[RMDB]
RNA sequence: GGGAACGACUCGAGUAGAGUCGAAAACCGCACUUCUUCGGAAGUGCGGAAAUACCGAGAUUGUACCUCGGUUGAAGUACAUAACCCUUGGAAACAAGGGAAAAAGCGUGAGCUUCGGCUCACGCAACCAAGAUCCCAAGUUCGCUUGGGAUCUUGGAAAAGAAACAACAACAACAAC
Reactivity to DMS in 0.01 (KOAc 150mM, MgCl2 10mM, bicine 150mM(pH8.5), 24C), signal-to-noise 1, nucleotides 027 to 126: c010c010g000c000a000c000u000u000c000u020u070c160g010g000a060a010g020u000g040c000g010g000a000a000a040u000a110c010c000g000a010g000a130u000u020g000u010a160c000c000u010c020g000g000u000u010g000a120a150g010u010a010c160a090u000a060a190c000c010c000u000u010g010g030a190a070a190c000a010a000g010g000g000a020a030a060a000a110g010c010g000u000g020a050g000c000u000u020c280g040g000c000u000c000a000c020g000c000a000a070
This 177-nucleotide RNA was probed chemically with DMS. Source: RMDB library M2PK50, as collected in RNAgym. For DMS, 941 sequencing reads were counted. The reactions ran in a buffer of 150 mM KOAc, 10 mM MgCl2 and 150 mM bicine (pH 8.5), at 24 C.